Structure probing data (DMS and 2A3) for a 177-nucleotide construct. Conditions: 150 mM KOAc, 10 mM MgCl2 and 150 mM bicine (pH 8.5), 24 C. For DMS, 3,201 sequencing reads were counted.
[RMDB]
RNA sequence: GGGAACGACUCGAGUAGAGUCGAAAAGUAGGAUCGGUAUAUUCAACCCAGAGAUUAAAGAUUUGUGCUUGUAACUUUGCAAACAAUGCAUCAUUAGUUUCACUAAAACGUGGUUCUUGAAAACCAAAACGUUAUAGGGUUUCGACCCUAUAACGUUAAAAGAAACAACAACAACAAC
Reactivity to DMS in 0.01 (KOAc 150mM, MgCl2 10mM, bicine 150mM(pH8.5), 24C), signal-to-noise 4, nucleotides 027 to 126: g020u020a100g020g000a040u000c050g020g000u000a100u010a100u000u000c070a110a110c030c010c040a140g010a050g000a030u000u000a010a040a110g010a070u000u000u010g030u000g010c030u000u000g000u000a070a160c160u000u010u010g010c080a050a050a050c050a030a040u000g020c110a010u000c020a060u000u000a030g010u000u000u000c030a090c190u000a050a050a040a060c200g010u000g000g000u000u000c030u020u010g000a050a060a100a070c030c040a020a060
Reactivity to 2A3 in 0.01 (KOAc 150mM, MgCl2 10mM, bicine 150mM(pH8.5), 24C), signal-to-noise 3, nucleotides 027 to 126: g070u040a050g020g060a030u080c050g020g040u100a090u010a040u170u050c040a040a080c000c010c050a000g020a000g000a040u070u040a050a020a040g050a080u080u030u150g020u050g030c020u030u000g000u050a100a150c040u140u190u190g020c050a060a100a020c010a090a040u110g010c000a000u010c010a020u070u030a000g010u000u060u000c040a060c080u170a080a100a100a020c070g060u040g000g000u040u050c040u090u060g080a140a140a030a030c000c030a000a100